[RMDB]
Source: RMDB library OK1LIB, as collected in RNAgym. Chemical mapping of a 177-nucleotide RNA with 2A3 and DMS. The DMS profile rests on 16,038 reads. The RNA was probed in 150 mM KOAc, 10 mM MgCl2 and 150 mM bicine (pH 8.5) at 24 C. Values cover nucleotides 27 to 126. For DMS the reverse transcriptase was MarathonRT.
RNA sequence: GGGAACGACUCGAGUAGAGUCGAAAAAUGGCAUAAUGCUUUUAAACGGUUUUGGCAAUCUUUUUUUUCAGGAUUAAAACAAUAUUUCAAAUGAUUGCGUCUUGGAAUACGAGGAAAAACAAAGCACACUCAUAUCCAUAUUCGUAUGGAUAUGAGUAAAAGAAACAACAACAACAAC
Reactivity to 2A3 in 0.01 (KOAc 150mM, MgCl2 10mM, bicine 150mM(pH8.5), 24C), signal-to-noise 9, nucleotides 027 to 126: a000u070g050g010c060a050u090a190a100u240g010c000u100u110u040u090a030a040a020c030g010g010u000u010u020u010g020g000c010a090a130u070c040u020u030u010u010u000u000u020u030c010a010g010g000a020u070u160a060a120a050a040c040a040a030u080a080u070u250u180c110a100a120a110u180g060a080u030u070g000c030g020u000c000u000u010g010g020a020a010u030a060c080g010a020g020g070a000a050a020a010a000c100a010a040a000g010c020a020c000
Reactivity to DMS in 0.01 (KOAc 150mM, MgCl2 10mM, bicine 150mM(pH8.5), 24C), signal-to-noise 5, nucleotides 027 to 126: a090u030g010g020c110a130u030a070a090u020g010c010u000u020u010u010a020a040a070c060g000g000u000u000u000u010g010g010c020a050a070u000c000u000u000u000u000u000u000u000u000c000a020g010g010a020u010u030a060a050a040a110c040a030a040u000a030u010u020u040c200a060a090a060u030g000a030u000u010g010c100g000u010c000u000u010g000g000a010a010u020a050c180g010a020g010g010a020a050a040a030a030c100a030a010a010g010c100a030c110